RNA sequence: GGGAACGACUCGAGUAGAGUCGAAAAGCGUCGUUCGCGACGCGGAAACCGUAGGUAAUCUUAACAAUGAUGUGAUCUCCCCACCCUUCCUUCGAAAGAGGGAAGGAGGAUCAUUGAGUUAGAAUUACCUAAACGGCACAGAGCAGUUCGCUGCUAAGGAUUAGUACGAGUUCGCUCGUACUAAUCCAAAAGAAACAACAACAACAAC
Reactivity to 2A3 in 0.01 (KOAc 150mM, MgCl2 10mM, bicine 150mM(pH8.5), 24C), signal-to-noise 3, nucleotides 027 to 156: g030c000g000u010c010g020u070u280c290g020c030g130a000c000g010c040g000g010a110a050a000c010c010g000u000a010g000g010u000a000a000u010c020u060u100a060a030c000a090a230u230g060a060u170g100u010g040a050u070c050u120c110c040c020c000a120c000c000c000u000u000c000c000u020u020c020g070a120a050a050g000a000g000g020g000a000a010g000g000a010g020g000a000u010c000a010u010u090g040a050g040u000u020a020g030a110a080u000u000a010c010c000u030a050a080a000c000g020g000c070a030c050a100g150a050g050c050a040g010u160u290c220g070c150u010g000c000u070a110a130
Reactivity to DMS in 0.01 (KOAc 150mM, MgCl2 10mM, bicine 150mM(pH8.5), 24C), signal-to-noise 1, nucleotides 027 to 156: g020c000g030u000c000g000u020u000c220g000c030g000a010c000g000c000g000g030a110a090a030c000c010g020u020a000g010g040u000a020a010u010c010u000u010a020a050c010a050a030u030g050a060u000g030u000g000a000u000c010u010c120c040c010c050a300c180c010c010u000u010c000c000u000u000c010g010a200a130a260g000a030g010g010g010a020a010g000g010a040g000g000a030u000c000a020u010u010g000a120g030u000u010a010g000a020a000u000u000a000c000c000u000a010a030a110c020g000g030c030a100c110a160g000a240g020c120a010g030u010u020c190g010c010u000g070c010u000a080a210